[RMDB]
Chemical mapping of a 177-nucleotide RNA with 2A3 and DMS. Values cover nucleotides 27 to 126. It was measured as part of the RMDB libraries RFM100 and RFMREP.
RNA sequence: GGGAACGACUCGAGUAGAGUCGAAAACGCGCCAUGAGCACGUGAUGUGCCGUAGGGAAGACGAUAAGCGAGCCGCCUGGGAAGUACGUCUGCAAGGAUGAAACUUAAAGGAAUUGGCGGGGGAGCACCGUAUCACUUUAUUCGUAAAGUGAUACGGAAAAGAAACAACAACAACAAC
Reactivity to 2A3 in 0.01 (KOAc 150mM, MgCl2 10mM, bicine 150mM(pH8.5), 24C), signal-to-noise 9, nucleotides 027 to 126: c050g010c020g020c010c020a080u120g040a050g040c010a010c030g090u160g140a220u270g020u030g010c010c010g020u080a110g020g050g020a040a060g040a020c080g020a060u060a190a050g020c010g020a010g040c010c010g020c010c010u060g020g040g020a030a020g010u030a040c040g010u000c010u030g050c040a040a040g060g000a010u060g020a140a090a010c020u050u060a120a040a060g100g030a120a120u130u110g010g000c000g000g010g000g010g030a030g000c020a020
Reactivity to DMS in 0.01 (KOAc 150mM, MgCl2 10mM, bicine 150mM(pH8.5), 24C), signal-to-noise 9, nucleotides 027 to 126: c050g010c060g000c020c020a070u010g010a170g010c020a030c010g020u020g010a090u030g020u010g020c020c030g020u010a080g000g000g010a070a060g000a160c070g000a140u020a070a100g010c040g000a300g010c020c030g010c020c010u000g000g000g020a030a020g010u010a100c050g000u000c010u000g010c290a070a090g010g010a040u000g000a090a080a050c030u010u010a070a120a100g010g010a100a120u030u020g010g020c010g020g000g010g000g000a230g010c090a180